[RMDB]
RNA sequence: GGGAACGACUCGAGUAGAGUCGAAAACUUCAGAUAUUUGUUGAGGGUAUCUGAGGGACUUUUACUCAACUCCGUUCGUUGGUCCACAUGUUCGUGUGAGGGCCAGAACCUAAGAAACUACUUCACGAACUGCGCCCGGAGAAGUCCUGACAAUCUGCAAAUGUUAGUGGUUCGCCACUAACAUUUGAAAAGAAACAACAACAACAAC
Reactivity to 2A3 in 0.01 (KOAc 150mM, MgCl2 10mM, bicine 150mM(pH8.5), 24C), signal-to-noise 3, nucleotides 027 to 156: c000u000u000c010a000g010a000u010a020u050u140u250g030u030u030g010a020g000g010g000u000a000u000c010u000g000a020g000g000g010a010c040u170u240u140u210a170c010u020c010a010a010c010u010c020c020g010u010u030c020g000u010u020g010g010u020c020c010a040c010a060u080g010u040u030c020g010u010g010u020g030a140g000g010g010c010c010a010g020a010a010c010c010u070a050a040g040a060a060a010c070u170a060c040u080u070c020a010c010g020a020a010c000u030g040c030g020c000c030c030g030g030a050g020a120a030g060u030c010c020u020g030a040c060a050a110u010c020u080g000
Reactivity to DMS in 0.01 (KOAc 150mM, MgCl2 10mM, bicine 150mM(pH8.5), 24C), signal-to-noise 1, nucleotides 027 to 156: c010u000u000c000a020g030a020u000a000u000u010u010g000u010u000g010a250g030g000g000u000a010u000c000u000g000a040g000g010g020a110c100u000u000u010u010a030c010u000c020a070a090c010u000c030c040g060u010u000c040g010u010u010g030g010u000c010c020a180c080a070u010g010u000u010c110g000u000g030u000g010a150g000g010g010c020c010a060g010a000a090c010c020u010a100a120g000a140a100a060c040u000a040c130u000u000c000a010c010g020a030a030c030u000g000c010g010c030c030c010g000g000a090g010a080a100g010u010c010c030u000g000a110c030a070a170u000c020u010g000
Structure probing data (2A3 and DMS) for a 207-nucleotide construct. 2A3 adducts were read by reverse transcription with SuperScript II with manganese. For 2A3, 2,589 sequencing reads were counted. High DMS reactivity at an A or C suggests that its Watson-Crick edge is free. The reactions ran in a buffer of 150 mM KOAc, 10 mM MgCl2 and 150 mM bicine (pH 8.5), at 24 C. Source: RMDB library RSTRND, as collected in RNAgym.